[RMDB]
RNA sequence: GGGAACGACUCGAGUAGAGUCGAAAAUUUGGAUUGGCCCUAAAGACAAAGUCAUUUCAUAAAUAGGGAAGUAAGACCUGGGGGAUUAAGUUCAAUCCACAAAGUUCUUGAACUUAUCAUUGAUUGAUAACAUCAUGUAGUUCGCUACAUGAUGUUAAAAAGAAACAACAACAACAAC
Reactivity to DMS in 0.01 (KOAc 150mM, MgCl2 10mM, bicine 150mM(pH8.5), 24C), signal-to-noise 6, nucleotides 027 to 126: u000u010u010g000g020a090u000u000g020g020c010c020c040u000a050a080a090g000a110c140a080a110a100g010u010c060a050u010u010u000c040a050u020a070a060a070u000a040g000g000g010a050a080g020u000a050a080g000a040c020c030u000g010g010g010g000g000a100u000u000a020a070g000u000u000c060a010a020u000c090c050a070c180a070a060a100g010u000u000c060u000u000g000a040a090c030u000u000a020u010c110a100u000u000g010a090u000u000g000a180
Reactivity to 2A3 in 0.01 (KOAc 150mM, MgCl2 10mM, bicine 150mM(pH8.5), 24C), signal-to-noise 3, nucleotides 027 to 126: u030u010u060g040g010a030u010u070g030g000c020c000c000u090a150a120a030g080a030c080a080a130a010g030u050c020a070u040u100u050c040a040u120a230a090a040u050a040g050g000g010a070a040g080u140a010a040g010a000c000c020u020g000g050g020g000g000a010u040u060a010a000g010u030u020c020a020a010u000c050c010a030c070a040a180a030g020u080u040c020u060u050g010a030a020c000u000u030a030u080c040a110u050u130g100a090u100u020g020a030

Source: RMDB library OK2TRN, as collected in RNAgym. An RNA of 177 nucleotides, treated with DMS and 2A3 and read out base by base. The RNA was probed in 150 mM KOAc, 10 mM MgCl2 and 150 mM bicine (pH 8.5) at 24 C. For DMS the reverse transcriptase was MarathonRT. For 2A3, 3,140 sequencing reads were counted.